[RMDB]
RNA sequence: GGGAACGACUCGAGUAGAGUCGAAAAUGUCUUGAACGAUUUACCAUAGAAUAACAAAUUUAUGAUUUUGUGUCUUUGUUUGUUCGGACACAUUAUCUAUACGAAUAAGAACGGUUGAGGGCAUUCGACAAAAAUGUAACUUCGGUUACAUUUUUGUAAAAGAAACAACAACAACAAC
Reactivity to DMS in 0.01 (KOAc 150mM, MgCl2 10mM, bicine 150mM(pH8.5), 24C), signal-to-noise 5, nucleotides 027 to 126: u000g000u010c000u000u030g020a120a080c010g000a030u000u010u020a060c050c020a090u000a100g010a150a100u040a110a160c100a060a090a130u030u020u010a050u010g000a010u010u000u000u000g030u000g010u000c010u010u000u010g010u000u010u000g020u020u000c030g010g000a010c000a000c000a000u000u000a010u000c000u010a110u010a110c140g010a080a060u020a100a090g020a080a110c110g000g000u020u010g000a050g000g000g020c060a040u000u000c070g000
Reactivity to 2A3 in 0.01 (KOAc 150mM, MgCl2 10mM, bicine 150mM(pH8.5), 24C), signal-to-noise 6, nucleotides 027 to 126: u040g020u010c010u060u200g110a090a030c010g020a060u080u140u300a020c010c010a010u090a080g170a100a100u210a160a030c120a050a070a100u200u250u130a130u190g000a020u010u010u000u000g000u000g000u000c010u020u050u060g060u040u020u050g050u030u050c020g000g000a000c000a000c000a000u000u000a000u000c020u010a060u060a050c070g090a030a060u150a160a060g110a090a030c080g040g060u060u110g100a050g010g000g000c010a020u020u080c050g010
This 177-nucleotide RNA was probed chemically with DMS and 2A3. Conditions: 150 mM KOAc, 10 mM MgCl2 and 150 mM bicine (pH 8.5), 24 C.